[RMDB]
Structure probing data (DMS and 2A3) for a 177-nucleotide construct. Values cover nucleotides 27 to 126. For DMS the reverse transcriptase was MarathonRT. For 2A3 the reverse transcriptase was SuperScript II with manganese. It was measured as part of the RMDB library OK1LIB. The RNA was probed in 150 mM KOAc, 10 mM MgCl2 and 150 mM bicine (pH 8.5) at 24 C. 2A3 is a SHAPE reagent: it acylates the 2'-hydroxyl of flexible nucleotides of all four kinds.
RNA sequence: GGGAACGACUCGAGUAGAGUCGAAAAUAGGCGGUAACAGGCGCGGAUCAGCACCGCCAGGGCGCUACGACCGGUGCGUUGCACGUAGCGUCGCGACAGAACUGCGUUUGCCGAUACGGGCGGGGGGCUACGCGGCUGUUUUCGAACAGCCGCGUAGAAAAGAAACAACAACAACAAC
Reactivity to DMS in 0.01 (KOAc 150mM, MgCl2 10mM, bicine 150mM(pH8.5), 24C), signal-to-noise 1, nucleotides 027 to 126: u010a100g000g000c000g000g000u020a080a020c140a070g030g010c040g050c000g000g010a120u050c190a230g020c040a050c050c010g030c020c050a030g060g000g000c000g000c000u000a000c000g050a140c140c010g080g000u070g000c050g060u000u030g000c080a140c000g000u000a010g000c020g000u000c000g000c150g020a070c110a110g000a180a010c130u010g000c010g060u040u000u030g090c000c000g010a220u010a100c120g000g000g020c000g000g000g000g000g000g000
Reactivity to 2A3 in 0.01 (KOAc 150mM, MgCl2 10mM, bicine 150mM(pH8.5), 24C), signal-to-noise 1, nucleotides 027 to 126: u300a000g000g070c000g040g040u050a230a030c010a070g010g000c000g060c000g010g010a240u200c010a040g040c030a010c000c000g010c000c000a000g000g000g010c000g000c000u010a000c010g100a020c030c120g160g000u100g000c120g150u060u100g000c030a020c130g000u040a000g000c000g040u020c030g000c020g070a000c000a030g200a130a020c020u040g000c000g010u000u090u040g080c000c000g040a050u030a120c000g000g000g010c000g000g000g020g000g000g000